Annotation
The record gives the reactivity of an RNA of 177 nucleotides to DMS and 2A3. Source: RMDB library RFM100, as collected in RNAgym. The reactions ran in a buffer of 150 mM KOAc, 10 mM MgCl2 and 150 mM bicine (pH 8.5), at 24 C.
[RMDB]
RNA sequence: GGGAACGACUCGAGUAGAGUCGAAAAAAAUCUGGUGACUCGCUUAGGAGCAACAGAGGCGAAAGCGCUGGCCAGGAGCGAAUCCGAUGAUAAAGGACGUAGGCUAGAGGAUCGAAGACGAUUAGAGGUCACCUUCAUUCUUCGGAAUGAAGGUGACAAAAGAAACAACAACAACAAC
Reactivity to DMS in 0.01 (KOAc 150mM, MgCl2 10mM, bicine 150mM(pH8.5), 24C), signal-to-noise 1, nucleotides 027 to 126: a000a010a000u050c000u000g000g050u010g000a050c050u010c050g000c120u000u000a190g000g010a100g090c100a100a160c160a020g000a000g010g020c020g000a190a060a210g000c070g000c000u000g000g000c000c000a180g000g010a020g000c000g010a000a050u030c000c010g040a060u000g000a000u000a190a150a210g000g000a080c010g000u030a000g020g000c010u040a140g000a040g000g020a160u010c020g010a030a020g000a060c110g000a030u020u010a110g010a100g000
Reactivity to 2A3 in 0.01 (KOAc 150mM, MgCl2 10mM, bicine 150mM(pH8.5), 24C), signal-to-noise 2, nucleotides 027 to 126: a000a000a030u060c030u060g000g000u030g100a130c010u040c060g000c050u100u130a050g060g060a100g030c020a060a210c050a020g080a010g100g000c000g030a060a040a030g000c060g000c000u000g000g020c040c020a100g140g000a000g020c070g000a060a060u000c000c010g020a040u110g050a030u080a110a140a100g000g010a000c000g010u050a010g000g030c000u000a000g010a010g080g020a020u000c040g010a010a060g060a040c090g060a060u070u070a130g080a030g080

For 2A3 the reverse transcriptase was SuperScript II with manganese.